[RMDB]
RNA sequence: GGGAACGACUCGAGUAGAGUCGAAAAUGUUCCGGAUUCGUCCGGAACAAAAUAUGGCACCGGUACUCGUCGAUUCAAUGCCACGGAGAUGGACCGGGUGAAAAACCACUUAGUUCGCUAAGUGGAAGUUUAUACAGGCGUUCGCGCCUGUAUAAACAAAAGAAACAACAACAACAAC
Reactivity to DMS in 0.01 (KOAc 150mM, MgCl2 10mM, bicine 150mM(pH8.5), 24C), signal-to-noise 2, nucleotides 027 to 126: u000g010u000u000c020c000g000g010a010u000u010c200g020u000c000c000g000g000a020a000c000a010a040a070a120u010a090u010g030g020c030a130c010c000g000g000u000a040c020u010c010g020u000c070g010a140u020u000c220a050a110u020g020c130c080a060c020g000g010a150g000a070u000g010g000a080c010c020g000g000g000u000g010a050a020a100a100a140c010c000a000c000u000u000a000g010u000u000c220g010c000u000a010a000g010u000g010g010a030a050
Reactivity to 2A3 in 0.01 (KOAc 150mM, MgCl2 10mM, bicine 150mM(pH8.5), 24C), signal-to-noise 1, nucleotides 027 to 126: u050g000u000u020c000c000g000g000a060u030u050c150g030u000c000c000g000g000a000a000c000a000a020a000a000u200a050u040g050g040c040a030c100c030g040g000u050a060c020u020c070g020u000c010g040a110u160u200c070a080a070u180g030c050c000a030c040g090g020a160g000a030u020g020g040a010c010c000g030g040g000u080g040a030a020a040a020a050c010c000a000c000u000u000a020g030u050u000c230g000c140u010a010a000g020u000g000g030a000a000

The record gives the reactivity of an RNA of 177 nucleotides to DMS and 2A3.
For DMS the reverse transcriptase was MarathonRT.
For 2A3 the reverse transcriptase was SuperScript II with manganese.
The reactions ran in a buffer of 150 mM KOAc, 10 mM MgCl2 and 150 mM bicine (pH 8.5), at 24 C.
Source: RMDB library M2PK50, as collected in RNAgym.
The 2A3 profile rests on 1,275 reads.